[RMDB]
An RNA of 177 nucleotides, treated with DMS and 2A3 and read out base by base.
For 2A3, 870 sequencing reads were counted.
For 2A3 the reverse transcriptase was SuperScript II with manganese.
The data come from the RNA Mapping Database (RMDB), library OK2TST.
The reactions ran in a buffer of 150 mM KOAc, 10 mM MgCl2 and 150 mM bicine (pH 8.5), at 24 C.

RNA sequence: GGGAACGACUCGAGUAGAGUCGAAAAGGACCAAGGCAGGCAUCCCUGCGUGGUCUGACACCUUUGAAACGUGGGUAAAUAAUCAGAGCGGCGUCCCUGCAAUGAUUAAACACCAAGGGAAGGCUGCCUCGCUAGAACGUUUCGACGUUCUAGCGAGAAAAGAAACAACAACAACAAC
Reactivity to DMS in 0.01 (KOAc 150mM, MgCl2 10mM, bicine 150mM(pH8.5), 24C), signal-to-noise 2, nucleotides 027 to 126: g020g010a000c000c000a050a040g000g020c000a000g000g020c300a190u010c200c000c000u000g000c010g020u000g010g000u010c000u000g000a160c150a110c010c010u000u000u010g000a010a040a120c160g020u000g000g010g000u030a080a090a110u020a080a000u000c120a040g000a300g020c020g010g090c070g010u000c060c040c000u000g000c180a140a170u000g000a020u010u010a090a060a130c180a050c050c030a220a040g000g000g030a030a050g000g020c030u000g000c030
Reactivity to 2A3 in 0.01 (KOAc 150mM, MgCl2 10mM, bicine 150mM(pH8.5), 24C), signal-to-noise 1, nucleotides 027 to 126: g020g000a000c000c040a000a000g300g000c010a000g010g000c090a220u200c130c010c000u000g020c030g060u030g000g030u010c020u010g030a000c020a090c040c000u150u010u110g170a100a140a030c110g040u100g020g050g020u120a080a140a080u130a030a120u090c080a050g020a000g080c000g020g020c040g100u070c020c000c000u000g030c060a100a080u030g030a070u060u260a060a070a040c020a000c060c000a030a030g060g030g000a040a040g070g010c000u010g020c010